[RMDB]
RNA sequence: GGGAACGACUCGAGUAGAGUCGAAAAGAUAUGGACGAGCGCUGGGAGCUUCUCGGAAACGAGAAAGCGACGAUCAGCCUCGUCCUAAGUCAAAACGGUGGUAGGGCCUUCGGGCCCUACCACCGAACGAAUUAAGACGGUUCGCCGUCUUAAUUCGAAAAGAAACAACAACAACAAC
Reactivity to DMS in 0.01 (KOAc 150mM, MgCl2 10mM, bicine 150mM(pH8.5), 24C), signal-to-noise 2, nucleotides 027 to 126: g000a040u010a300u000g010g010a020c010g000a020g020c200g020c020u000g000g000g010a070g010c000u000u000c000u000c020g000g000a030a130a140c000g010a010g000a010a060a040g010c040g010a070c220g000a040u010c000a000g000c020c000u000c010g000u000c000c000u000a000a120g030u000c000a070a110a140a140c030g030g080u000g000g000u000a000g020g050g060c000c000u000u000c220g040g040g020c000c000c000u000a000c000c000a000c000c010g000a010a040